[RMDB]
About this RNA:
This 177-nucleotide RNA was probed chemically with 2A3 and DMS. For DMS, 1,742 sequencing reads were counted. DMS (dimethyl sulfate) methylates the pairing face of unpaired adenines and cytosines. The reactions ran in a buffer of 150 mM KOAc, 10 mM MgCl2 and 150 mM bicine (pH 8.5), at 24 C. For DMS the reverse transcriptase was MarathonRT. The data come from the RNA Mapping Database (RMDB), library RFMREP.
RNA sequence: GGGAACGACUCGAGUAGAGUCGAAAAGUAAUCCGCAGACGAUCCUCAUGGGUAAGUAGAUUGAGGUAAUUAUGCGCCAGCUCGUUACUGAGAAUAUUCGUGCCGUCAUUAAUCCGCAGAAUGCAAAUCAGAAUAGACUGUUCGCAGUCUAUUCUGAAAAAGAAACAACAACAACAAC
Reactivity to 2A3 in 0.01 (KOAc 150mM, MgCl2 10mM, bicine 150mM(pH8.5), 24C), signal-to-noise 2, nucleotides 027 to 126: g010u010a020a040u040c020c020g000c020a010g020a060c000g030a010u070c010c010u020c010a060u070g120g000g000u100a110a070g060u030a080g070a140u000u070g020a020g020g000u020a020a070u090u110a060u140g030c020g040c050c040a010g000c020u040c020g050u050u030a080c020u030g030a010g020a150a040u070a050u080u050c010g010u030g000c010c010g020u020c020a000u040u110a050a050u040c030c020g000c030a000g010a170a010u070g000c060a000a030a080
Reactivity to DMS in 0.01 (KOAc 150mM, MgCl2 10mM, bicine 150mM(pH8.5), 24C), signal-to-noise 2, nucleotides 027 to 126: g000u000a060a050u000c040c040g020c040a070g030a080c070g030a080u010c020c020u020c070a050u000g020g010g020u000a070a090g000u010a100g010a110u010u000g000a090g020g000u000a080a080u000u020a060u000g000c060g000c060c050a060g010c010u000c120g000u000u000a030c050u010g000a120g000a070a120u000a050u000u010c080g010u010g010c030c030g010u000c070a060u010u010a090a080u010c010c030g010c100a090g010a070a050u010g010c090a050a090a140